Annotation: This 177-nucleotide RNA was probed chemically with DMS and 2A3. It was measured as part of the RMDB library OK2TST. Reactivities are given for positions 27 through 126. For 2A3 the reverse transcriptase was SuperScript II with manganese. DMS adducts were read by reverse transcription with MarathonRT.
[RMDB]
RNA sequence: GGGAACGACUCGAGUAGAGUCGAAAAGCGUAGGCCGCCUGCCACAGCAUGAAGUUGCUGGAGCGCUGCUCACCCGAGGUCCGCAGGAAGAGGUCAACGUCGGGAAUGUCGGGUCGCUGCAGGUGGCGAUGUGAUAGUUAUUCGUAACUAUCACAUCAAAAGAAACAACAACAACAAC
Reactivity to DMS in 0.01 (KOAc 150mM, MgCl2 10mM, bicine 150mM(pH8.5), 24C), signal-to-noise 9, nucleotides 027 to 126: g010c140g010u010a100g010g010c000c010g020c010c000u000g010c000c300a150c010a010g010c000a030u000g010a140a140g010u000u000g010c000u000g000g010a060g010c020g000c040u000g000c020u000c030a080c000c000c010g010a030g010g000u000c010c010g010c130a130g010g010a090a120g010a130g010g010u010c090a070a090c090g000u000c020g000g000g000a090a050u000g010u000c030g010g000g010u000c040g010c040u000g020c000a020g010g020u000g000g010c020
Reactivity to 2A3 in 0.01 (KOAc 150mM, MgCl2 10mM, bicine 150mM(pH8.5), 24C), signal-to-noise 9, nucleotides 027 to 126: g070c080g090u100a100g190g030c010c000g000c010c000u010g000c020c040a120c010a040g020c010a010u080g230a230a050g300u110u030g000c000u010g020g040a030g000c090g020c070u080g000c010u010c010a030c000c000c000g000a010g010g030u030c010c010g000c050a030g080g080a080a050g070a040g090g060u140c090a090a040c070g180u140c020g040g010g040a080a090u130g140u120c030g000g000g020u040c030g000c070u090g000c000a000g000g000u010g010g000c010